[RMDB]
RNA sequence: GGGAACGACUCGAGUAGAGUCGAAAAUUUGGCGCAAUGCCCGUCGCUGUCGGAGCAGGUCCCAGCACUGGUCGAGUUCGAUCUCGAUGCGGCGCAGUUGCUGCUGCUCCUCGGACUCGCUGAUGCCCAUGUGCAUCUUUUUCGAAAGAUGCACAUGAAAAGAAACAACAACAACAAC
Reactivity to 2A3 in 0.01 (KOAc 150mM, MgCl2 10mM, bicine 150mM(pH8.5), 24C), signal-to-noise 9, nucleotides 027 to 126: u050u020u070g020g000c030g020c120a100a110u220g020c010c010c010g040u040c020g010c080u080g060u090c060g010g000a010g000c010a020g020g070u110c050c050c000a010g010c000a000c000u030g030g010u050c010g010a040g060u050u090c060g050a300u090c150u080c140g020a030u080g050c020g050g000c130g000c080a010g070u180u200g010c020u030g010c000u000g000c000u000c020c000u010c020g040g010a010c010u010c070g020c050u090g020a060u090g010c000c010
Reactivity to DMS in 0.01 (KOAc 150mM, MgCl2 10mM, bicine 150mM(pH8.5), 24C), signal-to-noise 9, nucleotides 027 to 126: u000u010u000g010g010c020g020c260a100a080u010g010c010c010c040g020u000c060g010c060u000g010u010c140g010g010a040g010c020a030g010g010u010c170c300c020a070g010c010a030c020u000g000g000u000c010g000a040g010u000u000c130g010a120u010c120u000c030g010a020u030g020c020g010g000c020g010c020a100g000u000u000g020c020u000g010c010u000g000c010u000c010c040u000c060g000g000a020c010u000c100g010c030u000g000a070u000g010c020c040
The record gives the reactivity of an RNA of 177 nucleotides to 2A3 and DMS. The reactions ran in a buffer of 150 mM KOAc, 10 mM MgCl2 and 150 mM bicine (pH 8.5), at 24 C. DMS adducts were read by reverse transcription with MarathonRT.